Structure probing data (2A3 and DMS) for a 177-nucleotide construct. It was measured as part of the RMDB library M2PK50. For DMS the reverse transcriptase was MarathonRT. For 2A3, 2,318 sequencing reads were counted. Reactivities are given for positions 27 through 126.

RNA sequence: GGGAACGACUCGAGUAGAGUCGAAAAGCCGAAGAGUUCGCUCUUCGGCGACGAAUUUGGCGAAGAUGAGAGUCUACAGUACUAGCCAUCCCAGAUGUACAAAUAAGCAUUGCUUCGGCAAUGCUAACCCAAGGUAAAACUUCGGUUUUACCUUGGGAAAAGAAACAACAACAACAAC
Reactivity to 2A3 in 0.01 (KOAc 150mM, MgCl2 10mM, bicine 150mM(pH8.5), 24C), signal-to-noise 2, nucleotides 027 to 126: g000c000c010g030a020a000g060a000g050u140u170c250g040c080u000c000u010u000c000g000g090c000g010a000c010g090a060a170u110u090u120g020g010c030g010a010a010g060a040u080g030a030g010a020g130u000c020u020a080c080a100g000u020a020c030u030a020g000c010c010a040u010c000c000c000a010g010a070u110g030u030a020c030a030a110a090u290a180a020g000c000a010u000u020g000c000u020u080c180g070g000c020a000a000u000g010c000u000a010a000
Reactivity to DMS in 0.01 (KOAc 150mM, MgCl2 10mM, bicine 150mM(pH8.5), 24C), signal-to-noise 2, nucleotides 027 to 126: g020c000c000g000a000a000g070a040g050u020u000c280g020c000u000c000u000u000c000g020g000c000g000a010c170g030a080a100u010u000u010g000g010c000g000a100a070g000a020u000g010a160g000a250g000u000c020u020a050c240a110g010u000a020c040u000a080g010c000c000a060u000c010c000c000a140g000a080u000g000u000a000c020a090a080a080u030a150a040g010c000a020u000u010g010c000u000u020c120g040g000c000a010a010u000g000c010u000a000a050